[RMDB]
RNA sequence: GGGAACGACUCGAGUAGAGUCGAAAACAUCAUGCCUUCUUGGGGGCUUUCGGCCUCUAAGCCGCCUUAUUCCGGGAUCGCGGACCGCGAUCCGACAAUGGAAGGACCGUCUCCCGAGCAGUUUUGCGCUAUUGAGACAUUUCGAUGUCUCAAUAGCAAAAGAAACAACAACAACAAC
Reactivity to 2A3 in 0.01 (KOAc 150mM, MgCl2 10mM, bicine 150mM(pH8.5), 24C), signal-to-noise 6, nucleotides 027 to 126: c030a070u230c030a060u130g050c010c020u040u030c000u030u040g000g000g000g000g000c000u040u150u080c100g040g000c020c020u050c060u050a030a020g000c010c010g060c010c010u140u100a100u100u050c010c010g030g000g000a010u000c010g000c010g080g130a120c090c120g000c000g000a000u000c000c000g020a020c050a090a120u130g020g020a010a020g010g020a020c010c030g030u030c020u010c050c000c000g000a020g020c080a050g020u020u040u070u090g040c050
Reactivity to DMS in 0.01 (KOAc 150mM, MgCl2 10mM, bicine 150mM(pH8.5), 24C), signal-to-noise 4, nucleotides 027 to 126: c100a080u010c100a070u010g030c030c030u010u010c010u010u010g020g010g020g000g020c040u000u040u020c130g020g030c030c020u020c050u000a050a050g020c130c100g010c020c040u010u000a120u020u030c100c060g010g010g010a000u000c010g000c010g020g000a120c240c120g030c010g010a010u000c000c000g000a040c080a080a070u020g000g000a050a040g000g010a110c080c070g000u010c050u000c000c000c000g020a160g000c110a090g000u000u000u000u000g000c220
Source information
The record gives the reactivity of an RNA of 177 nucleotides to 2A3 and DMS. DMS adducts were read by reverse transcription with MarathonRT. Source: RMDB libraries RFM100 and RFMREP, as collected in RNAgym. Reactivities are given for positions 27 through 126.